The record gives the reactivity of an RNA of 170 nucleotides to 2A3 and DMS. The RNA was probed in 150 mM KOAc, 10 mM MgCl2 and 150 mM bicine (pH 8.5) at 24 C. Reactivities are rounded to 0.1 and cut off at 0 and 3. For 2A3 the reverse transcriptase was SuperScript II with manganese.
[RMDB]
RNA sequence: GGGAACGACUCGAGUAGAGUCGAAAAUGCUGGACCAAACGCCCGAGCCGGGAUGGGCCGCAUACCGAGCGAAGGAUACCGGUAAGGGGAGAGGAGGAAUCCCGAGGGGAUCGCCCACUAAAGAGUAAACCCGUGAUGUUCGCAUCACGGAAAAGAAACAACAACAACAAC
Reactivity to 2A3 in 0.01 (KOAc 150mM, MgCl2 10mM, bicine 150mM(pH8.5), 24C), signal-to-noise 6, nucleotides 027 to 129: u100g010c030u080g000g050a070c040c020a090a080a060c090g010c020c000c000g040a040g030c020c040g020g000g000a010u020g010g040g020c020c000g010c010a020u060a110c010c040g050a030g020c030g040a050a030g010g020a010u050a070c010c000g000g040u040a060a050g030g010g010g000a030g000a000g000g020a000g020g000a010a020u030c000c010c000g020a030g000g020g000g000a040u030c040g060c020c020c000a050c030u130a060a100a020g100a010g050u130a060a040a050c000
Reactivity to DMS in 0.01 (KOAc 150mM, MgCl2 10mM, bicine 150mM(pH8.5), 24C), signal-to-noise 8, nucleotides 027 to 129: u040g020c060u020g000g000a060c030c080a000a100a110c160g010c050c020c020g000a300g030c080c020g030g050g020a030u020g020g010g020c010c050g000c020a110u050a100c090c050g010a060g000c100g010a080a100g040g000a040u030a060c080c060g000g000u020a060a080g020g000g000g000a050g030a060g000g000a070g030g020a050a090u030c040c020c030g040a020g020g010g000g010a000u040c120g030c030c010c050a080c090u080a050a080a040g000a040g000u030a100a080a090c080